[RMDB]
RNA sequence: GGGAACGACUCGAGUAGAGUCGAAAAAAUCAGAGGAAUAAACGAUGAAAAUUAAAUGCACCAAAUCAAACACCAUGAAUCUGACAGUUGGCGCAAUUUACCACAUGGAAGAUGGUGUAAACGGAUUUAGCCCGACUGUUACGCAUGAAUACGGCGGUAGCAAUGCUGAGUUCGCUCAGCAUUGCUAAAAAGAAACAACAACAACAAC
Reactivity to 2A3 in 0.01 (KOAc 150mM, MgCl2 10mM, bicine 150mM(pH8.5), 24C), signal-to-noise 1, nucleotides 027 to 156: a000a000u170c100a030g060a060g080g090a020a040u100a060a050a030c010g060a080u110g010a080a000a030a080u160u080a100a180a000u130g020c010a000c000c010a000a160a060u090c020a080a080a040c050a010c030c010a030u090g020a070a090u130c010u040g000a000c010a010g000u040u000g060g000c020g030c070a000a040u090u000u070a090c040c000a050c070a070u050g020g070a050a050g040a130u000g040g010u010g020u020a000a170a000c090g050g020a000u040u070u230a030g000c000c000c000g000a000c000u000g010u090u020a030c010g010c000a010u120g090a100a010u110a100c060g010g020c040g020g010

Chemical mapping of a 207-nucleotide RNA with 2A3.
Conditions: 150 mM KOAc, 10 mM MgCl2 and 150 mM bicine (pH 8.5), 24 C.
2A3 adducts were read by reverse transcription with SuperScript II with manganese.